[RMDB]
RNA sequence: GGGAACGACUCGAGUAGAGUCGAAAAAGCAUCAUGGCCAAGAUCGAGCAGAAGCAGUCCGACCAGGGCACCGUCAAAUACGGUAAGGGCCGGCUGUCGCUGGACAUGACAGCCGAGAUCAACCACAAGUAGUUGCAAGUUUCGACUUGCAACUACUAAAAGAAACAACAACAACAAC
Reactivity to 2A3 in 0.01 (KOAc 150mM, MgCl2 10mM, bicine 150mM(pH8.5), 24C), signal-to-noise 1, nucleotides 027 to 126: a020g050c040a080u050c010a030u100g030g010c010c020a030a020g030a070u090c060g030a040g000c010a020g040a090a000g030c040a020g010u040c010c030g040a070c050c010a010g120g000g030c060a030c030c010g010u060c070a140a090a000u200a050c010g000g030u040a050a110g090g000g000c000c000g000g000c000u000g010u010c020g000c120u070g030g040a040c030a080u140g010a000c000a010g010c000c010g020a010g000a010u020c030a010a060c000c030a040c010a050
Reactivity to DMS in 0.01 (KOAc 150mM, MgCl2 10mM, bicine 150mM(pH8.5), 24C), signal-to-noise 2, nucleotides 027 to 126: a090g010c050a070u000c020a020u000g000g000c010c050a080a150g000a050u010c060g020a090g050c020a060g020a110a110g000c110a080g000u000c010c050g000a080c060c030a050g000g000g010c110a110c000c000g020u010c100a080a060a090u010a060c010g000g000u010a080a060g000g010g020c060c000g000g000c000u000g000u000c050g010c050u000g000g000a100c130a100u000g000a020c040a020g010c010c020g020a060g010a090u000c080a100a140c070c060a100c220a070
Structure probing data (2A3 and DMS) for a 177-nucleotide construct. The RNA was probed in 150 mM KOAc, 10 mM MgCl2 and 150 mM bicine (pH 8.5) at 24 C. For DMS, 1,153 sequencing reads were counted. For DMS the reverse transcriptase was MarathonRT. It was measured as part of the RMDB library OK2TRN. For 2A3, 1,621 sequencing reads were counted.